[RMDB]
The record gives the reactivity of an RNA of 177 nucleotides to DMS and 2A3. The 2A3 profile rests on 7,869 reads.

RNA sequence: GGGAACGACUCGAGUAGAGUCGAAAAUGUUGAUAAACUACUUACAUUACGGCGAUAUGGUAAGUAUACCGAUCAUUCAAUGCAUGUUGGAUAACGGAGCGACCAUGGAUACUACUAUCAACGAUAAAUAUCGGACUAGAUUCGUCUAGUCCGAUAUAAAAGAAACAACAACAACAAC
Reactivity to DMS in 0.01 (KOAc 150mM, MgCl2 10mM, bicine 150mM(pH8.5), 24C), signal-to-noise 3, nucleotides 027 to 126: u060g020u000u000g000a050u020a020a120a150c120u000a050c100u000u020a090c140a060u020u010a100c180g030g000c130g010a210u020a030u000g000g010u000a010a050g010u010a070u050a070c010c010g010a090u010c140a020u000u000c020a020a010u010g020c300a030u040g010u010u000g000g000a020u010a060a120c060g000g000a050g000c030g010a070c020c010a010u000g010g000a190u000a060c100u000a060c110u000a010u000c050a000a070c030g000a080u010a040a060
Reactivity to 2A3 in 0.01 (KOAc 150mM, MgCl2 10mM, bicine 150mM(pH8.5), 24C), signal-to-noise 9, nucleotides 027 to 126: u140g010u010u010g010a040u090a110a190a060c080u100a020c010u150u080a030c040a180u150u130a080c110g110g000c080g140a070u040a050u140g070g010u030a100a130g040u010a120u040a120c010c010g040a110u070c010a010u040u050c030a040a030u060g250c120a080u300g090u020u010g010g000a020u020a060a050c020g010g010a010g030c010g020a020c010c000a020u030g030g020a030u070a150c020u030a040c020u010a040u020c010a030a030c030g030a020u080a110a180